The record gives the reactivity of an RNA of 177 nucleotides to DMS and 2A3.
For 2A3 the reverse transcriptase was SuperScript II with manganese.
Conditions: 150 mM KOAc, 10 mM MgCl2 and 150 mM bicine (pH 8.5), 24 C.
For DMS, 15,100 sequencing reads were counted.
RNA sequence: GGGAACGACUCGAGUAGAGUCGAAAACAAAAUGGGUAGUAGAGUAAAGGCUGUCUCGGUCUCUACUAUCUAUUUCACGCACUACUUGUAGACUAGACUGAGAUAGCCUUUAUCUACAAGUGGUGUAGGAACACUUUGUAUUCGUACAAGGUGUUCCAAAAGAAACAACAACAACAAC
Reactivity to DMS in 0.01 (KOAc 150mM, MgCl2 10mM, bicine 150mM(pH8.5), 24C), signal-to-noise 5, nucleotides 027 to 126: c050a080a030a080a050u020g000g010g010u020a080g020u010a010g010a030g010u010a000a020a010g000g020c000u000g000u010c000u000c000g010g010u000c000u000c040u000a010c010u010a050u030c090u010a010u010u010u030c140a130c130g020c070a040c090u010a040c140u010u010g000u000a010g010a170c300u040a040g000a010c030u010g000a030g000a030u010a010g000c000c000u000u000u000a010u000c010u000a010c010a030a060g010u010g010g010u010g010u010a090
Reactivity to 2A3 in 0.01 (KOAc 150mM, MgCl2 10mM, bicine 150mM(pH8.5), 24C), signal-to-noise 6, nucleotides 027 to 126: c020a010a030a010a030u060g020g000g000u020a020g000u000a000g010a010g020u040a010a010a000g010g000c010u020g030u070c000u000c020g030g010u010c000u000c000u010a000c000u000a010u010c000u010a010u010u070u070c040a040c090g050c010a020c040u060a000c010u020u020g000u000a010g000a020c040u030a020g000a010c020u020g020a020g010a060u070a010g000c000c000u000u000u010a010u010c000u000a000c000a000a000g010u010g010g000u020g000u010a050